[RMDB]
About this RNA: This 177-nucleotide RNA was probed chemically with DMS.

RNA sequence: GGGAACGACUCGAGUAGAGUCGAAAAAAAAGAUAUGGAGUACUGACUUAUUUUACAGGCUAUGAAGUUUCUUCGGAAACGAAGAAAUGGAGCCUGUAAAAUAAGUACAGUACUCCUAAGUCAAAAAUCAAAGUAACAUGUUCGCAUGUUACUUUGAAAAAGAAACAACAACAACAAC
Reactivity to DMS in 0.01 (KOAc 150mM, MgCl2 10mM, bicine 150mM(pH8.5), 24C), signal-to-noise 2, nucleotides 027 to 126: a090a060a140a120g010a070u010a300u000g010g030a010g000u010a000c010u000g010a120c000u000u000a000u000u000u000u000a000c000a000g000g010c030u000a230u020g000a110a230g010u000u000u000c000u000u010c020g000g000a110a100a160c010g010a000a030g000a010a010a010u010g000g010a000g020c030c000u010g010u000a000a000a000a000u000a000a000g000u000a010c000a010g000u010a000c010u000c000c000u000a000a050g020u040c040a020a080a050a080a130